[RMDB]
RNA sequence: GGGAACGACUCGAGUAGAGUCGAAAAGAUAUGGAUCGGCCACCCAGCAACAGCAAUUCUCGGAAACGAGAAUUGACAUGCUGGGUGGUCCGAUCCUAAGUCAAAGCUAUCCGUUCGCGGAUAGCAACCUAUGCUAACAGUUCGCUGUUAGCAUAGGAAAAGAAACAACAACAACAAC
Reactivity to 2A3 in 0.01 (KOAc 150mM, MgCl2 10mM, bicine 150mM(pH8.5), 24C), signal-to-noise 2, nucleotides 027 to 126: g020a000u090a050u230g000g000a000u010c010g010g020c010c000a000c020c010c000a020g000c010a010a190c040a110g070c010a010a020u020u010c010u000c000g060g060a130a070a060c020g020a000g030a020a000u000u000g030a050c000a020u060g000c010u000g000g000g010u070g000g000u000c000c000g000a000u010c010c000u000a010a000g010u000c020a000a050a000g000c000u000a000u000c030c000g030u050u080c300g000c020g110g010a000u010a000g000c000a000a010
Reactivity to DMS in 0.01 (KOAc 150mM, MgCl2 10mM, bicine 150mM(pH8.5), 24C), signal-to-noise 5, nucleotides 027 to 126: g000a040u010a300u000g010g000a010u000c000g000g000c000c010a010c000c000c000a000g010c000a020a090c300a250g000c010a010a000u000u000c010u000c000g000g000a120a110a300c010g000a010g000a010a000u000u000g000a030c080a240u000g010c000u010g000g000g020u000g000g000u000c010c000g000a000u000c000c000u000a010a080g000u000c040a100a150a160g000c000u000a010u000c010c000g010u010u010c230g030c000g000g010a010u000a000g020c000a040a030